[RMDB]
RNA sequence: GGGAACGACUCGAGUAGAGUCGAAAAGAGCGAUUUAAUAUUAGAUCGUCGCGAUCUAAAUAGUCCGACACGCUGUCGCGGGGCAGCACCUCCCGGGAAAGGGCCCUUGGUGCGCAUUCGAAAGAAAAUCCCUAUAGCAUUUCGAUGCUAUAGGGAUAAAAGAAACAACAACAACAAC
Reactivity to 2A3 in 0.01 (KOAc 150mM, MgCl2 10mM, bicine 150mM(pH8.5), 24C), signal-to-noise 2, nucleotides 027 to 126: g010a040g010c060g010a040u070u110u250a300a110u170a170u080u110a030g040a030u040c050g140u080c070g090c170g180a030u010c000u010a030a040a090u050a030g040u030c000c020g030a020c030a030c060g080c060u100g020u030c010g010c080g070g020g010g040c020a040g000c010a010c000c000u010c000c010c000g000g000g020a150a130a060g020g040g000c000c000c030u030u060g070g000u030g000c010g010c020a050u040u090c040g110a080a070a040g120a030a090a030
Reactivity to DMS in 0.01 (KOAc 150mM, MgCl2 10mM, bicine 150mM(pH8.5), 24C), signal-to-noise 4, nucleotides 027 to 126: g010a110g020c040g010a050u000u010u000a070a170u010a120u000u000a020g010a020u000c010g020u010c240g030c120g000a020u000c010u000a020a070a110u000a100g000u000c040c020g020a070c110a100c120g010c050u000g010u000c030g010c090g000g010g000g000c040a040g020c020a060c040c020u000c010c010c020g000g000g000a050a090a100g000g020g020c070c020c030u000u010g020g000u010g000c040g020c130a120u000u000c040g010a110a060a140g000a070a040a100